The data come from the RNA Mapping Database (RMDB), library ARCHII. The record gives the reactivity of an RNA of 207 nucleotides to DMS and 2A3. The RNA was probed in 150 mM KOAc, 10 mM MgCl2 and 150 mM bicine (pH 8.5) at 24 C.

RNA sequence: GGGAACGACUCGAGUAGAGUCGAAAAGGGGAUGACACGGCUUCGACGUGUAGUAAGCGUGCAGCAGACUGACCUGCCGAGCAGCCUGAUUCGCUUCGUAAAACCUGUCAGGAACUGUAACUGCGGACGAUUAUUCGUACGCGAUGGCGGCGUAACAGAAUGGUUAGAAGUUCGCUUCUAACCAUUCAAAAGAAACAACAACAACAAC
Reactivity to DMS in 0.01 (KOAc 150mM, MgCl2 10mM, bicine 150mM(pH8.5), 24C), signal-to-noise 2, nucleotides 027 to 156: g000g010g020g000a140u000g000a100c030a050c020g010g030c060u000u010c090g010a080c010g000u010g010u000a110g010u000a060a070g030c050g010u010g030c040a090g030c010a050g000a300c070u010g010a080c050c010u000g050c040c030g000a130g020c010a040g010c000c000u000g020a080u000u010c040g030c010u010u010c130g000u000a100a090a050a100c040c020u010g040u010c010a090g010g040a050a080c010u010g010u020a090a110c060u010g010c030g000g010a030c030g000a100u000u010a300u020u000c000g030u000a000c000g000c010g010a040u010g010g040c000g010g020c030g020u000a070a090c120a180
Reactivity to 2A3 in 0.01 (KOAc 150mM, MgCl2 10mM, bicine 150mM(pH8.5), 24C), signal-to-noise 2, nucleotides 027 to 156: g040g010g010g010a050u070g030a030c000a020c030g090g000c050u130u100c030g140a060c040g010u040g020u010a010g060u030a050a060g030c000g000u050g010c070a010g000c000a000g000a090c050u060g020a060c000c000u020g000c000c000g030a040g010c020a010g020c020c010u050g000a050u050u060c040g030c050u070u130c030g080u060a040a030a060a110c000c010u010g080u090c030a000g000g050a080a100c000u020g020u080a060a000c060u090g010c000g020g010a010c000g020a040u110u070a090u230u190c000g000u000a010c000g000c040g020a030u040g010g020c010g000g070c010g010u010a040a020c020a020